The record gives the reactivity of an RNA of 207 nucleotides to 2A3. Values cover nucleotides 27 to 156. The 2A3 profile rests on 3,801 reads.

[RMDB]
RNA sequence: GGGAACGACUCGAGUAGAGUCGAAAAUUGCAAAGAGGAGAGCUUUUCUAGCACACAUUCUGUAUCUACAUGUGCAUGCCUGCACACAAUCACUAUGUAUUUGUAUUCUACAGGAGGAAUUCAAACAGUGAAAUAAAGUAGGUGGUUUGAAGAAAGGAACCGAAUGGAAAUUCGUUUCCAUUCGGUUAAAAGAAACAACAACAACAAC
Reactivity to 2A3 in 0.01 (KOAc 150mM, MgCl2 10mM, bicine 150mM(pH8.5), 24C), signal-to-noise 5, nucleotides 027 to 156: u100u090g020c020a030a090a000g040a020g040g020a030g010a020g010c000u110u080u060u010c060u080a040g010c030a010c000a010c020a070u110u080c060u150g070u090a100u030c020u070a040c010a080u090g010u000g020c000a010u120g050c010c070u040g000c020a020c010a010c020a060a060u030c000a000c010u030a030u090g040u050a050u120u040u010g010u010a020u020u010c020u050a070c080a110g000g140a070g040g010a100a020u070u050c010a010a010a020c000a010g020u020g030a040a070a110u110a020a090a010g010u030a020g010g020u030g030g050u040u070u100g040a040a030g030a030a080a010g090g100